[RMDB]
RNA sequence: GGGAACGACUCGAGUAGAGUCGAAAACUAAAACUGAAGUAGAAGGUCCGGGCACCCGAUGCUGUAUAUGGGUACAGGGGUGCCCUAUUCAUUGUAAAGGGUGCGGUGCUAAAGAGACCUGGGACUAGUAGCAUAAUGGUUUCGACCAUUAUGCUACAAAAGAAACAACAACAACAAC
Reactivity to DMS in 0.01 (KOAc 150mM, MgCl2 10mM, bicine 150mM(pH8.5), 24C), signal-to-noise 4, nucleotides 027 to 126: c010u000a060a090a150a120c160u010g020a130a100g010u010a090g010a210a050g000g000u000c040c080g000g000g010c000a000c000c010c010g010a210u010g010c020u000g000u000a020u000a070u020g040g010g010u000a020c020a200g000g020g010g040u000g000c000c000c000u000a000u000u000c030a020u010u000g010u000a030a040a300g000g000g020u010g010c020g010g020u000g010c150u010a050a080a150g010a190g000a010c020c010u000g000g010g010a060c050u000a110
Reactivity to 2A3 in 0.01 (KOAc 150mM, MgCl2 10mM, bicine 150mM(pH8.5), 24C), signal-to-noise 2, nucleotides 027 to 126: c010u060a040a050a050a060c070u090g070a170a000g030u110a060g060a280a010g000g010u000c020c000g030g130g020c000a020c000c000c000g050a060u070g040c010u020g040u020a040u010a050u280g100g000g000u010a020c050a100g010g040g140g090u010g000c020c000c000u000a000u000u000c000a000u060u020g020u030a010a050a050g030g000g000u010g000c000g020g080u060g040c040u080a090a140a080g090a020g000a000c000c010u050g000g000g000a050c080u090a070